Notes:
This 177-nucleotide RNA was probed chemically with 2A3 and DMS. 2A3 adducts were read by reverse transcription with SuperScript II with manganese. DMS (dimethyl sulfate) methylates the pairing face of unpaired adenines and cytosines.

[RMDB]
RNA sequence: GGGAACGACUCGAGUAGAGUCGAAAAUGAGAAUACUUUUAGUACAAGCGAGUACACGCAGUAUAGUGCCACUUGUGUGAGAAUACUUUUAGUACAAGCGAGUACACGCAGUAUACUGCCACUUGUGCGAGAGCACUCGAUUCGUCGAGUGCUCUCGAAAAGAAACAACAACAACAAC
Reactivity to 2A3 in 0.01 (KOAc 150mM, MgCl2 10mM, bicine 150mM(pH8.5), 24C), signal-to-noise 4, nucleotides 027 to 126: u180g040a040g070a160a050u170a260c050u130u060u070u110a080g010u060a010c040a110a030g020c000g130a020g080u110a040c060a020c100g010c010a000g000u020a000u030a000g190u000g030c030c000a020c010u010u010g020u010g030u030g100a150g100a180a050u080a040c000u090u180u050u150a070g030u030a040c010a000a030g010c040g010a020g050u070a080c040a000c080g000c000a000g040u010a000u000a000c000u000g010c000c000a040c030u000u020g040u020g050
Reactivity to DMS in 0.01 (KOAc 150mM, MgCl2 10mM, bicine 150mM(pH8.5), 24C), signal-to-noise 2, nucleotides 027 to 126: u050g020a200g000a130a100u040a050c000u040u000u000u070a040g100u010a040c000a040a090g000c060g000a230g000u070a180c300a010c220g000c050a020g000u000a040u000a080g000u030g000c040c140a050c010u000u040g020u090g000u010g020a180g000a190a110u000a020c070u040u010u020u030a170g050u000a050c020a240a300g060c040g000a160g000u010a020c100a100c300g100c080a000g000u000a010u000a120c000u020g000c000c050a010c000u030u010g010u010g010

DMS adducts were read by reverse transcription with MarathonRT. The 2A3 profile rests on 1,813 reads. The reactions ran in a buffer of 150 mM KOAc, 10 mM MgCl2 and 150 mM bicine (pH 8.5), at 24 C.